[RMDB]
RNA sequence: GGGAACGACUCGAGUAGAGUCGAAAAGCUAGUCGGAGACGACUAGCAUCGAUCAGUUCGCUGAUCGUAAGGAGCAGUCUUCCGCAGUCGACGCUCCGAUAGGCAUGGCCGACUGCGUUACUGUAAAAUCAGGAUAAUUAAUUAAUGAAGCCAUGCGAUGGAUCGUAUUAUUCGUAAUACGAUCCAUAAAAGAAACAACAACAACAAC
Reactivity to DMS in 0.01 (KOAc 150mM, MgCl2 10mM, bicine 150mM(pH8.5), 24C), signal-to-noise 2, nucleotides 027 to 156: g020c000u000a000g040u010c010g060g020a300g000a300c000g040a030c000u000a020g050c020a010u000c000g010a010u010c010a050g000u000u000c300g020c010u000g000a040u010c010g000u000a060a110g010g020a140g040c020a120g010u010c030u000u010c130c000g000c020a050g020u000c030g010a050c070g000c010u000c050c010g020a070u000a070g040g010c000a030u010g020g000c010c020g000a120c030u000g030c010g000u000u000a210c010u000g020u000a070a060a070a190u010c010a030g010g000a180u000a070a080u000u000a060a180u010u000a070a130u020g000a110a090g000c000c010a010u000g010c000g000
Reactivity to 2A3 in 0.01 (KOAc 150mM, MgCl2 10mM, bicine 150mM(pH8.5), 24C), signal-to-noise 4, nucleotides 027 to 156: g000c000u000a000g000u000c010g030g010a050g000a090c010g000a000c000u000a000g030c000a030u030c010g000a000u000c000a010g040u070u080c160g020c090u000g000a000u000c000g000u030a080a120g010g010a010g000c060a050g050u010c080u120u020c020c000g000c010a010g010u010c000g010a020c050g000c020u000c040c000g000a130u100a060g080g000c010a000u000g000g010c000c010g010a000c000u000g010c010g010u000u060a030c000u000g040u060a020a060a060a170u130c010a010g030g010a030u010a070a030u230u120a090a060u150u060a030a070u160g050a020a010g000c000c000a000u000g000c000g010